Record summary: This 177-nucleotide RNA was probed chemically with DMS and 2A3. Values cover nucleotides 27 to 126. The DMS profile rests on 6,634 reads.

[RMDB]
RNA sequence: GGGAACGACUCGAGUAGAGUCGAAAAGAUAUGGAUUAGUGAUGACCUACAUACCCAGCUUCCUCGGAAACGAGGAAGUAGUGGGUGUAGCAAGCUAAUCCUAAGUCAAAUCCCAGUUCGCUGGGAAGUUUACUGAAAGGUUCGCCUUUCAGUAAACAAAAGAAACAACAACAACAAC
Reactivity to DMS in 0.01 (KOAc 150mM, MgCl2 10mM, bicine 150mM(pH8.5), 24C), signal-to-noise 6, nucleotides 027 to 126: g000a030u010a300u000g000g010a010u000u000a010g030u000g020a100u020g010a130c300c010u000a010c010a070u010a100c020c010c010a230g000c000u000u000c000c000u000c000g000g000a130a080a160c000g010a010g010g010a010a000g010u000a010g040u010g020g010g020u000g010u000a000g000c040a090a190g010c010u000a010a000u000c000c000u010a030a070g000u010c030a130a130a190u000c000c000c000a020g010u010u000c220g010c020u000g000g000g000a040a050
Reactivity to 2A3 in 0.01 (KOAc 150mM, MgCl2 10mM, bicine 150mM(pH8.5), 24C), signal-to-noise 6, nucleotides 027 to 126: g010a010u080a050u190g000g000a000u010u000a000g010u020g210a300u140g050a140c000c040u010a010c010a040u300a250c010c010c000a010g010c010u000u000c000c000u010c000g020g050a120a130a080c020g010a000g000g000a000a010g000u000a010g070u130g000g020g000u010g000u000a000g000c030a260a190g000c010u010a000a000u000c000c000u020a120a020g010u000c020a100a000a170u030c020c000c010a000g020u060u110c300g000c150u010g000g000g040a100a120